[RMDB]
RNA sequence: GGGAACGACUCGAGUAGAGUCGAAAAAUUUCACUGGUGUUAUUACAAGCAUUAUUGAUUUAAUCAAGACUUGCAUUCAGGCUUUCGGUUAAUUUUUUCAACUAAAAAACAGAGGAAAUAUUCAACGCAUAUCUCAAUUGUUCGCAAUUGAGAUAUGAAAAGAAACAACAACAACAAC
Reactivity to DMS in 0.01 (KOAc 150mM, MgCl2 10mM, bicine 150mM(pH8.5), 24C), signal-to-noise 3, nucleotides 027 to 126: a070u000u000u010c030a060c030u010g000g020u000g000u000u010a040u000u000a080c160a110a090g010c090a080u000u000a100u000u000g000a040u010u020u010a100a090u000c030a070a040g010a050c090u000u010g010c120a090u000u000c110a040g010g000c040u000u000u010c050g010g000u000u000a030a000u010u010u000u010u010u000c040a050a060c100u030a000a060a050a050a070a050c110a030g020a090g000g000a020a020a040u000a080u000u000c070a020a220c300g010
Reactivity to 2A3 in 0.01 (KOAc 150mM, MgCl2 10mM, bicine 150mM(pH8.5), 24C), signal-to-noise 1, nucleotides 027 to 126: a000u010u000u040c030a000c000u040g050g000u010g030u110u100a120u120u150a040c020a090a040g000c030a000u020u050a040u060u140g030a060u000u050u300a080a040u040c020a000a010g000a010c010u040u000g050c010a030u040u100c010a020g020g100c040u060u100u210c060g030g010u040u070a060a120u010u070u000u020u030u060c060a070a010c010u140a080a010a050a000a160a160c070a010g070a010g030g100a020a000a070u080a050u060u070c030a030a000c040g000